The record gives the reactivity of an RNA of 177 nucleotides to DMS and 2A3. The 2A3 profile rests on 3,397 reads. Values cover nucleotides 27 to 126. The reactions ran in a buffer of 150 mM KOAc, 10 mM MgCl2 and 150 mM bicine (pH 8.5), at 24 C. For DMS the reverse transcriptase was MarathonRT.

[RMDB]
RNA sequence: GGGAACGACUCGAGUAGAGUCGAAAAAUCUUGGCGAAGUCAGCGCGGAAGGAGCGCGCAACUCCUUACCCUCGCCUUUUUUUUUCCGCUCCCGUUCGCGAAACCGUUCAGCGGAAAAGGGACCAAAGAAAACCUAUUUAUUCGUAAAUAGGUUUUCAAAAGAAACAACAACAACAAC
Reactivity to DMS in 0.01 (KOAc 150mM, MgCl2 10mM, bicine 150mM(pH8.5), 24C), signal-to-noise 6, nucleotides 027 to 126: a040u010c060u000u000g010g030c000g000a030a090g000u010c200a090g020c120g010c170g000g010a050a030g000g000a020g020c020g000c280g010c180a100a110c010u000c010c000u000u000a120c060c010c030u000c010g010c000c000u000u000u000u000u000u000u000u000u000c000c030g020c040u000c070c040c040g010u000u000c030g000c060g000a090a070a090c210c060g000u010u000c070a100g020c010g000g000a010a020a030a060g010g000g000a120c100c110a060a080a120
Reactivity to 2A3 in 0.01 (KOAc 150mM, MgCl2 10mM, bicine 150mM(pH8.5), 24C), signal-to-noise 2, nucleotides 027 to 126: a010u040c040u030u060g010g010c020g020a050a010g230u160c090a040g070c030g030c080g080g000a020a010g010g010a010g000c090g010c010g020c090a040a170c010u020c000c000u030u080a300c020c000c010u020c010g000c000c020u010u120u000u000u000u000u000u000u050c010c010g000c040u020c010c020c010g000u030u020c040g020c010g090a120a090a080c020c000g070u070u060c060a030g000c020g010g000a040a040a020a000g010g000g020a020c020c050a080a120a040